[RMDB]
RNA sequence: GGGAACGACUCGAGUAGAGUCGAAAAAUUCAAAGGACAUCACCUAUGAAGAUGGAUCCAAUACCAUAUGGAAUUAUGUGGUUGAAUGCACUACAAAUACAUGGGAGGUUAUCCAGGCGAGCACGAAUCCACAUCAAGCCAUAGAGGCGCUUAUUCACGAAUAAAAUCUCUUCGGAGAUUUUAUUCGAAAAGAAACAACAACAACAAC
Reactivity to 2A3 in 0.01 (KOAc 150mM, MgCl2 10mM, bicine 150mM(pH8.5), 24C), signal-to-noise 2, nucleotides 027 to 156: a000u150u060c030a060a030a030g030g010a000c020a050u030c010a040c010c130u110a130u200g070a080a060g030a030u050g010g090a020u030c010c020a000a060u070a090c020c000a020u030a010u050g010g050a030a070u110u060a030u030g020u010g020g010u040u080g110a080a040u080g040c010a000c090u090a090c090a060a080a030u180a060c060a070u030g010g070g000a050g070g010u110u040a040u150c040c010a000g090g000c030g040a040g040c010a000c050g000a040a010u030c000c000a040c000a020u000c060a070a010g040c000c000a040u040a040g110a050g060g000c030g030c040u120u130a070u100u180c040a000
Reactivity to DMS in 0.01 (KOAc 150mM, MgCl2 10mM, bicine 150mM(pH8.5), 24C), signal-to-noise 1, nucleotides 027 to 156: a210u000u020c050a040a140a190g040g020a060c070a050u020c030a090c040c060u020a090u010g000a140a080g020a080u000g030g000a060u000c000c040a070a110u000a070c000c020a020u000a100u000g010g010a090a150u010u000a040u000g030u000g000g030u000u000g000a050a050u000g000c040a130c000u010a200c060a110a030a180u010a040c020a040u000g030g000g030a050g040g010u010u000a030u010c030c000a100g000g010c010g010a040g020c020a070c050g000a110a080u000c010c020a030c040a030u000c050a070a180g040c000c030a040u010a080g020a110g030g050c090g000c070u000u000a040u010u000c050a200
Structure probing data (2A3 and DMS) for a 207-nucleotide construct. Reactivities are given for positions 27 through 156. Conditions: 150 mM KOAc, 10 mM MgCl2 and 150 mM bicine (pH 8.5), 24 C.